[RMDB]
RNA sequence: GGGAACGACUCGAGUAGAGUCGAAAAAGUUUGGUAUGAGAAGUCAGAAACUCAGUACUGACAUUUAAAUUACAUUUAGAGGGCAUUAUCAUGUCUUUAAUUCCGAGGCCAAUGUAAGGUUCACAGCUGGAAUUGGUAUAAUAUUGGGGUAUUAGUCUACUCCAACUAUUUUCGAAUAGUUGGAGUAAAAAGAAACAACAACAACAAC
Reactivity to DMS in 0.01 (KOAc 150mM, MgCl2 10mM, bicine 150mM(pH8.5), 24C), signal-to-noise 2, nucleotides 027 to 156: a130g010u000u010u010g070g000u010a030u000g010a170g000a070a170g030u000c020a190g010a160a080a210c020u000c030a090g030u010a090c010u000g000a030c030a130u010u000u010a050a070a090u000u010a070c040a190u000u000u000a110g010a100g000g010g040c000a030u000u000a100u000c100a060u000g010u010c020u000u000u000a070a100u010u010c130c010g000a110g000g010c040c040a060a050u000g010u010a150a090g000g010u000u000c160a070c050a130g030c020u000g010g000a150a090u010u010g000g030u000a090u000a040a060u010a110u000u000g010g000g010g070u000a100u000u000a120g000u010c040
Reactivity to 2A3 in 0.01 (KOAc 150mM, MgCl2 10mM, bicine 150mM(pH8.5), 24C), signal-to-noise 2, nucleotides 027 to 156: a010g090u120u090u060g000g010u040a050u120g030a010g000a170a000g030u110c080a030g080a090a030a020c050u080c080a010g030u080a040c010u030g000a010c000a000u090u100u140a050a120a100u080u100a080c000a000u080u130u150a060g010a040g030g010g000c010a010u000u060a090u300c080a000u070g000u000c000u040u110u080a120a050u130u000c040c010g020a020g020g010c010c000a000a000u050g000u020a070a040g010g020u110u120c030a040c030a040g020c030u030g010g000a060a060u000u010g030g000u110a050u030a300a040u150a110u040u080g000g030g020g000u040a020u080u050a030g030u040c030
The record gives the reactivity of an RNA of 207 nucleotides to DMS and 2A3. The DMS profile rests on 3,599 reads. For 2A3, 731 sequencing reads were counted.